[RMDB]
RNA sequence: GGGAACGACUCGAGUAGAGUCGAAAAAAGCCGGCGGAGAGAUCGAGGAUUUGGGGAGGAGAGGGGAACCGAGGGGGGUUCGAACUCAAGAAGAGAAGAUUUUCGAGGAAAUACUCCCAAGAAGUUCAUGGUAAUACGUUCGCGUAUUACAAAAGAAACAACAACAACAAC
Reactivity to 2A3 in 0.01 (KOAc 150mM, MgCl2 10mM, bicine 150mM(pH8.5), 24C), signal-to-noise 6, nucleotides 027 to 129: a010a010g050c000c000g000g000c020g010g020a060g000a010g010a050u070c030g030a020g030g010a040u090u070u060g040g010g010g010a070g020g010a050g040a020g020g000g000g000a020a010c030c040g030a100g000g020g000g000g000g000u050u060c030g030a060a030c010u020c080a050a030g050a040a010g030a050g000a090a010g010a030u040u040u010u070c050g010a020g000g010a010a030a000u070a100c020u030c000c010c010a010a020g070a050a010g020u100u080c050a070u200g080
Reactivity to DMS in 0.01 (KOAc 150mM, MgCl2 10mM, bicine 150mM(pH8.5), 24C), signal-to-noise 4, nucleotides 027 to 129: a070a040g050c020c020g060g000c060g050g010a080g000a090g010a020u030c030g010a000g000g030a100u010u000u030g000g000g000g000a080g050g020a080g010a040g000g070g000g050a090a030c090c040g000a110g020g000g030g020g010g000u000u000c050g010a080a080c050u020c040a000a000g030a080a060g020a080g010a060a000g010a070u050u030u000u030c070g010a080g020g000a040a060a050u040a110c110u000c010c020c030a060a060g020a040a070g030u010u000c020a100u050g010
Source information
Chemical mapping of a 170-nucleotide RNA with 2A3 and DMS. The RNA was probed in 150 mM KOAc, 10 mM MgCl2 and 150 mM bicine (pH 8.5) at 24 C. It was measured as part of the RMDB library 15KLIB. The DMS profile rests on 18,476 reads. 2A3 adducts were read by reverse transcription with SuperScript II with manganese.